[RMDB]
The data come from the RNA Mapping Database (RMDB), library OK1LIB. This 177-nucleotide RNA was probed chemically with DMS and 2A3. Values cover nucleotides 27 to 126. For 2A3, 15,626 sequencing reads were counted. The reactions ran in a buffer of 150 mM KOAc, 10 mM MgCl2 and 150 mM bicine (pH 8.5), at 24 C. For DMS, 8,407 sequencing reads were counted.

RNA sequence: GGGAACGACUCGAGUAGAGUCGAAAACAUCGUGAGGUGAAAGGGCGCAAUGGACGCGGCUACGACAAGAGUUGGCCUCACCGACUUGACGUUUCGUUUGCUACGAGAGUCUUUCGCCGAUGCGGUGCAACACCUAAGGUUUCGACCUUAGGUGUUGAAAAGAAACAACAACAACAAC
Reactivity to DMS in 0.01 (KOAc 150mM, MgCl2 10mM, bicine 150mM(pH8.5), 24C), signal-to-noise 4, nucleotides 027 to 126: c030a040u000c000g030u010g010a280g000g030u010g000a040a070a070g010g000g010c020g030c020a150a090u040g000g000a120c020g040c050g010g020c020u010a040c070g010a080c100a080a180g000a070g010u010u020g000g010c070c050u010c120a090c020c000g010a070c040u000u010g010a160c170g000u020u030u000c000g010u010u040u170g010c000u000a010c020g020a240g010a030g020u000c000u000u000u000c000g000c000c030g020a130u030g000c070g000g000u020g010
Reactivity to 2A3 in 0.01 (KOAc 150mM, MgCl2 10mM, bicine 150mM(pH8.5), 24C), signal-to-noise 9, nucleotides 027 to 126: c000a010u030c010g020u040g050a020g000g010u030g040a060a040a070g090g050g010c040g000c070a090a210u270g110g030a070c050g000c020g040g040c020u050a030c030g090a010c030a070a080g050a010g090u070u060g030g010c000c030u040c030a050c010c000g050a050c000u040u080g030a040c090g060u020u050u030c020g010u030u140u280g020c010u020a020c010g020a010g010a010g140u000c000u000u000u000c030g000c000c000g020a070u130g030c030g010g020u040g030